This 207-nucleotide RNA was probed chemically with 2A3 and DMS.
The 2A3 profile rests on 1,443 reads.
The DMS profile rests on 4,636 reads.
2A3 adducts were read by reverse transcription with SuperScript II with manganese.
High DMS reactivity at an A or C suggests that its Watson-Crick edge is free.
The data come from the RNA Mapping Database (RMDB), library OK3TST.
Conditions: 150 mM KOAc, 10 mM MgCl2 and 150 mM bicine (pH 8.5), 24 C.

RNA sequence: GGGAACGACUCGAGUAGAGUCGAAAAAGUUUAUCUACAUCAUCACCAACACUUGCUAUUUUCCAUUUCAUUAAUGAUAGCCAUCCUAGUGGAUUUGAAGUGGUACCUUAUUAUCGUGGUUUUGAUUGCAUUCUCUAUUGACUAAUGAUAUCGAGCAUGGACUUUUAUGAUUCGUCAUAAAAGUCCAAAAAGAAACAACAACAACAAC
Reactivity to 2A3 in 0.01 (KOAc 150mM, MgCl2 10mM, bicine 150mM(pH8.5), 24C), signal-to-noise 3, nucleotides 027 to 156: a000g070u090u090u040a070u040c030u070a050c010a070u080c010a000u060c010a010c020c020a070a080c010a020c060u040u090g040c010u090a070u090u090u030u000c020c000a030u000u000u060c020a030u030u190a120a080u150g080a020u030a040g050c020c000a050u020c020c010u020a030g030u030g050g040a070u080u020u130g020a030a030g000u000g010g010u030a030c000c010u130u000a090u080u080a100u180c050g000u040g010g010u000u000u070u060g060a070u020u070g000c030a010u090u010c010u000c000u080a050u070u080g070a030c010u080a020a070u080g080a020u130a030u250c030g000a010g040c030a050
Reactivity to DMS in 0.01 (KOAc 150mM, MgCl2 10mM, bicine 150mM(pH8.5), 24C), signal-to-noise 2, nucleotides 027 to 156: a090g030u000u000u010a060u020c060u000a030c070a050u000c010a070u010c060a080c020c020a100a080c070a070c030u000u000g030c090u000a090u000u000u010u000c020c030a110u010u020u000c050a040u000u020a130a100u020g020a130u000a110g010c060c060a090u000c060c050u000a110g080u000g010g000a090u010u020u000g010a050a020g050u000g010g020u000a040c070c040u010u000a090u000u000a070u000c090g000u000g040g010u000u010u000u000g000a070u010u000g000c020a080u000u010c020u000c020u000a190u000u020g000a140c020u000a050a070u010g020a070u000a070u000c070g010a080g030c060a240